[RMDB]
RNA sequence: GGGAACGACUCGAGUAGAGUCGAAAAUUUUUGAGUGAUGGGGUCUUGCCGUGUUGCCCAGGCUGGUCUUAAGAUCCUGGCCUGAAACAAUCCUCCUGCCUUGGCCUCCCAAAGUACUAGGAUUACAUACUUCCUCUAACUUCGGUUAGAGGAAGUAAAAAGAAACAACAACAACAAC
Reactivity to DMS in 0.01 (KOAc 150mM, MgCl2 10mM, bicine 150mM(pH8.5), 24C), signal-to-noise 2, nucleotides 027 to 126: u000u000u000u000u000g000a070g030u010g010a090u010g000g010g020g010u000c010u000u020g020c020c040g000u010g030u010u000g020c080c050c010a080g000g000c000u000g010g030u000c180u000u020a090a160g000a080u010c020c080u000g020g000c010c010u000g000a100a050a080c110a050a050u000c030c020u000c030c050u000g020c020c020u000u000g010g000c030c030u000c030c020c010a030a070a100g030u010a040c080u010a080g010g010a100u010u010a060c140a170

The data come from the RNA Mapping Database (RMDB), library OK2TRN. The record gives the reactivity of an RNA of 177 nucleotides to DMS. Reactivities are given for positions 27 through 126. For DMS the reverse transcriptase was MarathonRT.